[RMDB]
RNA sequence: GGGAACGACUCGAGUAGAGUCGAAAAGUAGAUGAUAUCGUUAAGACUGACGGUACACUCAUGGUAGAGCGGUUUGUGUCUUUGGCUAUAGAUGCUUACCCUCUCACAAAGCAUGAAGAUAUAGAAUACGCCGUCGCCUUCGGGCGACGGAAAAGAAACAACAACAACAAC
Reactivity to 2A3 in 0.01 (KOAc 150mM, MgCl2 10mM, bicine 150mM(pH8.5), 24C), signal-to-noise 2, nucleotides 027 to 129: g100u070a000g020a240u120g000a080u090a000u070c050g040u000u000a160a120g010a190c100u090g050a000c000g000g000u000a040c070a000c000u010c000a010u030g200g000u100a020g000a000g000c090g020g000u000u000u000g010u000g020u000c000u120u030u140g090g020c000u060a080u000a140g000a040u010g010c000u020u020a020c000c020c000u000c000u000c010a030c020a080a160a060g150c010a030u110g140a000a020g070a000u020a030u050a120g110a120a010u220a090c090g010
Reactivity to DMS in 0.01 (KOAc 150mM, MgCl2 10mM, bicine 150mM(pH8.5), 24C), signal-to-noise 2, nucleotides 027 to 129: g020u020a100g000a070u030g000a110u000a050u010c030g050u000u070a090a110g000a160c140u000g080a130c020g000g000u000a050c050a140c030u000c000a050u010g000g030u020a070g020a010g040c180g090g000u000u010u040g020u020g070u000c040u000u060u030g040g020c210u040a030u050a020g020a020u000g000c150u000u020a000c000c090c000u030c040u030c070a080c170a220a100a160g000c040a000u150g000a030a080g010a110u000a110u110a100g010a120a140u000a040c230g010